Chemical mapping of a 170-nucleotide RNA with 2A3 and DMS. 2A3 is a SHAPE reagent: it acylates the 2'-hydroxyl of flexible nucleotides of all four kinds. It was measured as part of the RMDB library 15KLIB. DMS adducts were read by reverse transcription with MarathonRT. Reactivities are given for positions 27 through 129. For 2A3 the reverse transcriptase was SuperScript II with manganese.
[RMDB]
RNA sequence: GGGAACGACUCGAGUAGAGUCGAAAAACUACUGGUAUACCUGAAUACAACUUUAUCAUCUACGACUCAUCAGAUCGUGGCCAGGAAAGUUUAGCUAGGUCUGCAUGUGUUUAUUAUUCUCAAGUCUCCAACUGAUUCUUCGGAAUCAGUAAAAGAAACAACAACAACAAC
Reactivity to 2A3 in 0.01 (KOAc 150mM, MgCl2 10mM, bicine 150mM(pH8.5), 24C), signal-to-noise 9, nucleotides 027 to 129: a000c160u220a020c020u080g060g000u040a030u020a050c010c010u020g070a090a030u140a080c070a050a040c030u080u080u080a170u150c050a040u030c020u040a010c030g030a010c020u030c080a160u060c070a140g050a090u010c030g080u050g020g000c050c070a080g080g000a050a050a010g030u060u080u070a030g020c070u030a000g010g010u010c010u010g010c030a030u060g010u010g030u040u030u020a120u080u040a070u080u020c020u000c020a050a060g060u020c020u000c040c020a030
Reactivity to DMS in 0.01 (KOAc 150mM, MgCl2 10mM, bicine 150mM(pH8.5), 24C), signal-to-noise 9, nucleotides 027 to 129: a010c090u090a000c040u080g040g040u030a030u030a010c020c010u000g030a040a030u040a080c110a050a040c000u010u040u040a040u010c060a130u060c060u030a040c050g020a050c070u020c110a150u010c150a140g020a070u020c020g050u000g000g080c090c110a120g020g020a050a040a060g000u010u010u020a090g040c100u020a050g000g000u030c010u030g000c080a070u040g010u030g050u000u000u000a070u040u030a090u020u010c000u000c040a050a060g040u040c010u000c050c050a100